Description:
This 207-nucleotide RNA was probed chemically with DMS and 2A3. High DMS reactivity at an A or C suggests that its Watson-Crick edge is free. The RNA was probed in 150 mM KOAc, 10 mM MgCl2 and 150 mM bicine (pH 8.5) at 24 C. The DMS profile rests on 3,059 reads. It was measured as part of the RMDB library OK3TST.
[RMDB]
RNA sequence: GGGAACGACUCGAGUAGAGUCGAAAAAAAACUUGACGAUGACAAACGUGAGUAAAUUGGACUCUGGAGAAUAUGUGCAACGUGUCAAAACAGCAAAUGACAGUGUGCAUCGAGCACACUACAUGACUUACUUCAAUGUGACUGUUUUCCAAAUGAACCUAUCGAGAUGAUUCGUCAUCUCGAUAGGAAAAGAAACAACAACAACAAC
Reactivity to DMS in 0.01 (KOAc 150mM, MgCl2 10mM, bicine 150mM(pH8.5), 24C), signal-to-noise 2, nucleotides 027 to 156: a050a010a080a110c010u010u020g000a110c140g050a200u000g000a120c150a110a030a160c070g010u000g010a110g000u010a010a040a110u000u030g030g000a070c080u000c080u000g040g000a080g020a060a100u000a020u020g030u000g040c060a040a060c050g000u000g060u030c030a030a040a040a020c060a060g030c000a020a070a100u010g000a120c060a040g030u000g050u000g010c030a130u020c120g030a300g000c030a020c000a020c000u000a020c020a040u010g000a090c090u000u000a060c040u010u010c080a080a080u000g000u010g010a060c040u010g000u000u000u010u000c000c020a010a060a050u000g020a090a130
Reactivity to 2A3 in 0.01 (KOAc 150mM, MgCl2 10mM, bicine 150mM(pH8.5), 24C), signal-to-noise 5, nucleotides 027 to 156: a010a000a000a000c050u070u060g080a040c040g050a060u100g010a050c090a100a140a020c050g030u020g020a030g030u070a030a130a140u070u040g050g010a020c020u010c050u080g040g010a020g050a080a010u070a070u210g050u030g030c000a030a050c070g040u040g020u080c010a020a050a040a070c070a020g050c040a050a160a120u080g050a100c040a030g000u000g000u000g000c000a060u160c170g040a030g000c000a000c000a000c000u010a010c000a020u090g030a050c010u060u080a040c000u060u160c060a090a140u150g000u010g090a050c010u010g050u030u020u000u040c040c020a040a080a110u120g020a040a050